[RMDB]
The data come from the RNA Mapping Database (RMDB), library M2PK90. An RNA of 177 nucleotides, treated with DMS and 2A3 and read out base by base. The reactions ran in a buffer of 150 mM KOAc, 10 mM MgCl2 and 150 mM bicine (pH 8.5), at 24 C. The DMS profile rests on 847 reads. The 2A3 profile rests on 1,783 reads. In probing experiments dimethyl sulfate is read out at A N1 and C N3, which are open when not base-paired.
RNA sequence: GGGAACGACUCGAGUAGAGUCGAAAAGCCGUGCUCGAGAGGGAGGAGAAAAUGCAGAGCUAUCCCGUCGUUUCGCUAAACAAAUGCGAAACGACAAAUUGCGUUACAUACGCAAUCCUCUAAUGAACUUCUUCUUCCGUUUCGACGGAAGAAGAAGAAAAGAAACAACAACAACAAC
Reactivity to DMS in 0.01 (KOAc 150mM, MgCl2 10mM, bicine 150mM(pH8.5), 24C), signal-to-noise 2, nucleotides 027 to 126: g040c030c040g010u000g040c060u000c030g000a110g000a050g000g030g000a020g010g000a030g010a040a030a130a110u000g000c160a110g000a070g020c140u000a080u010c030c070c000g000u010c000g000u000u000u000c000g020c040u030a020a070a140c300a080a050a050u000g030c000g000a000a030a010c010g000a020c040a030a050a070u000u000g000c000g010u000u000a090c170a160u010a030c000g030c000a020a030u010c070c030u000c050u000a110a090u030g010a130a160
Reactivity to 2A3 in 0.01 (KOAc 150mM, MgCl2 10mM, bicine 150mM(pH8.5), 24C), signal-to-noise 2, nucleotides 027 to 126: g020c000c010g020u060g010c040u030c040g130a080g000a030g060g060g010a040g000g040a080g050a010a080a010a010u150g030c090a020g000a010g080c020u050a050u040c000c000c000g010u000c000g000u000u000u000c000g000c020u060a140a230a080c070a030a140a000u120g000c010g020a000a000a000c000g000a000c000a010a080a000u020u020g000c000g030u000u110a160c040a130u210a030c010g000c000a000a000u000c030c000u090c020u050a080a120u150g110a050a050